Source: RMDB library OK3TST, as collected in RNAgym.
Chemical mapping of a 207-nucleotide RNA with 2A3 and DMS.
For 2A3, 478 sequencing reads were counted.
The reactions ran in a buffer of 150 mM KOAc, 10 mM MgCl2 and 150 mM bicine (pH 8.5), at 24 C.
The DMS profile rests on 1,973 reads.
RNA sequence: GGGAACGACUCGAGUAGAGUCGAAAAUAACUCAGUUACAUUGGCAAAUUUGAAAUCAUUGAUGAUCACAGAGCUGGGAAAAUUGUUGUGAACCUCACAGGCGGGCUAAACAAGUGUGGAGUGAUCAGCCUCAGAUUUGAUGUGCAACUCAAAGAUCUCGCCAUAAUUGAUUCGUCAAUUAUGGCGAAAAAGAAACAACAACAACAAC
Reactivity to 2A3 in 0.01 (KOAc 150mM, MgCl2 10mM, bicine 150mM(pH8.5), 24C), signal-to-noise 1, nucleotides 027 to 156: u130a000a110c050u040c060a060g040u060u020a050c030a080u040u140g020g000c020a030a090a090u050u030u110g050a070a070a000u070c020a010u010u140g020a040u020g010a010u060c000a000c040a080g050a010g090c010u080g000g000g160a000a120a030a040u060u020g040u020u020g020u000g070a070a110c000c000u030c010a020c000a020g020g030c020g000g000g000c070u030a000a080a060c040a050a000g050u020g010u010g100g070a070g000u060g000a030u010c000a010g010c030c000u030c010a010g020a140u090u110u030g060a050u050g000u070g000c020a010a000c010u030c070a080a090a040g050a110u180c090
Reactivity to DMS in 0.01 (KOAc 150mM, MgCl2 10mM, bicine 150mM(pH8.5), 24C), signal-to-noise 1, nucleotides 027 to 156: u020a090a120c100u000c000a100g020u000u000a080c030a080u010u020g020g010c000a010a090a130u000u020u010g020a110a140a120u020c110a090u000u000g000a150u000g000a130u010c010a130c000a100g040a130g040c000u000g000g000g010a120a110a070a110u000u020g050u000u010g050u010g040a070a090c030c000u010c020a120c070a110g010g010c050g030g000g040c010u010a040a040a060c060a040a110g010u000g010u000g050g010a130g030u000g020a080u000c040a090g030c040c030u000c030a110g000a180u000u010u000g010a100u000g010u010g000c040a040a030c030u000c010a050a070a100g000a180u010c050